[RMDB]
An RNA of 177 nucleotides, treated with DMS and 2A3 and read out base by base. Conditions: 150 mM KOAc, 10 mM MgCl2 and 150 mM bicine (pH 8.5), 24 C. Values cover nucleotides 27 to 126. The DMS profile rests on 1,247 reads.
RNA sequence: GGGAACGACUCGAGUAGAGUCGAAAAUAACUAAGAUCACUCUCCCUUCAGUCUCAGUGAAGAAGAGCACAUCUAACUAGUCAAGUCUGGCAGUCACAAUUCAGGUGCCACCCUGCUAGGUAGGGGACAACCUGCACUGAUUCGUCAGUGCAGGUUGAAAAGAAACAACAACAACAAC
Reactivity to DMS in 0.01 (KOAc 150mM, MgCl2 10mM, bicine 150mM(pH8.5), 24C), signal-to-noise 2, nucleotides 027 to 126: u020a150a140c110u020a060a030g000a100u000c090a190c050u000c020u010c100c040c010u020u000c090a090g000u010c060u000c160a150g000u010g000a060a060g010a070a060g030a060g000c120a080c170a040u000c010u000a070a070c040u000a030g080u000c070a040a080g000u000c040u000g000g000c000a030g000u000c030a050c140a050a090u030u000c180a060g000g000u000g020c030c020a070c050c020c020u000g000c020u000a030g010g050u000a050g020g000g000g010a220
Reactivity to 2A3 in 0.01 (KOAc 150mM, MgCl2 10mM, bicine 150mM(pH8.5), 24C), signal-to-noise 2, nucleotides 027 to 126: u110a040a020c080u050a090a060g040a090u080c010a020c040u030c000u000c060c020c000u020u040c040a090g150u040c080u010c150a140g090u000g010a010a050g000a010a000g020a040g000c090a010c000a040u040c000u040a020a080c000u040a010g190u170c080a120a030g000u000c070u030g000g000c020a020g060u220c040a040c060a150a200u160u210c050a060g090g020u020g050c020c000a030c010c000c000u020g060c020u030a060g110g000u060a030g030g020g040g010a020